[RMDB]
Chemical mapping of a 177-nucleotide RNA with 2A3 and DMS. For 2A3, 1,946 sequencing reads were counted. Values cover nucleotides 27 to 126. The data come from the RNA Mapping Database (RMDB), library OK2TST. Conditions: 150 mM KOAc, 10 mM MgCl2 and 150 mM bicine (pH 8.5), 24 C.
RNA sequence: GGGAACGACUCGAGUAGAGUCGAAAAGACAUGGCCAUCGGUGCGAUUUGGGAGAGCGAAGAUGGAGAGGCGAGGCGUAUCCCUGAUGCCGUUGCCUGGAUGACGCGGCGCCCAUAUGUAGGCACGAACGGGAUAGUCAUUUCGAUGACUAUCCCGUAAAAGAAACAACAACAACAAC
Reactivity to 2A3 in 0.01 (KOAc 150mM, MgCl2 10mM, bicine 150mM(pH8.5), 24C), signal-to-noise 2, nucleotides 027 to 126: g070a030c030a080u100g080g000c020c000a010u040c020g030g040u150g010c040g040a070u030u080u180g060g000g020a080g020a030g030c050g060a090a020g030a060u090g070g030a030g020a010g050g010c020g010a000g000g020c020g000u060a140u070c030c000c000u030g050a050u160g020c020c050g050u120u120g010c010c030u020g030g050a060u140g020a040c020g010c020g030g000c030g040c040c040c000a060u060a020u140g120u070a070g050g000c000a010c100g030a060
Reactivity to DMS in 0.01 (KOAc 150mM, MgCl2 10mM, bicine 150mM(pH8.5), 24C), signal-to-noise 2, nucleotides 027 to 126: g000a090c070a080u010g030g000c010c030a030u000c050g010g040u010g010c050g000a150u000u000u020g000g010g010a070g000a270g010c000g000a070a090g020a060u000g000g000a130g010a160g000g010c000g020a050g010g010c000g010u010a130u000c020c000c040u010g010a110u010g020c000c010g030u010u000g040c010c010u010g010g000a110u020g020a090c090g000c040g000g000c010g010c000c010c030a090u000a060u000g010u000a100g000g030c030a070c160g010a090